[RMDB]
RNA sequence: GGGAACGACUCGAGUAGAGUCGAAAACACCAGAGACAGAGCUGCUGUUCCUACGGCGGUUGCAGGAUGUGCGGGCAGAGGAAGGCCAGGAUGUGUGUCUCGAAGUGGAGACAGGCCGAGUGGGUGCGACCUUACACGUGUUCGCACGUGUAAGGUCAAAAGAAACAACAACAACAAC
Reactivity to 2A3 in 0.01 (KOAc 150mM, MgCl2 10mM, bicine 150mM(pH8.5), 24C), signal-to-noise 1, nucleotides 027 to 126: c060a060c000c000a010g010a010g000a080c050a060g020a020g050c020u030g000c000u020g030u120u010c010c080u080a070c020g030g020c020g000g040u050u090g050c030a040g080g010a060u100g050u060g110c000g000g040g000c040a010g020a030g070g050a040a020g050g020c010c000a010g000g030a080u070g060u090g040u000g030u100c000u030c000g010a250a040g090u180g090g020a030g000a040c080a060g060g030c000c000g030a020g000u070g000g000g040u050g040c060
Reactivity to DMS in 0.01 (KOAc 150mM, MgCl2 10mM, bicine 150mM(pH8.5), 24C), signal-to-noise 2, nucleotides 027 to 126: c080a140c040c010a090g000a150g020a050c130a110g000a180g020c080u020g000c060u000g000u000u010c070c060u010a120c070g000g010c030g010g010u000u010g030c070a130g020g000a100u000g060u000g030c000g000g000g010c080a020g010a100g010g000a080a130g010g000c000c050a100g010g010a110u010g010u000g030u020g000u010c010u000c000g000a090a140g020u020g010g000a050g000a030c020a040g010g000c030c030g000a120g010u010g000g000g030u000g010c160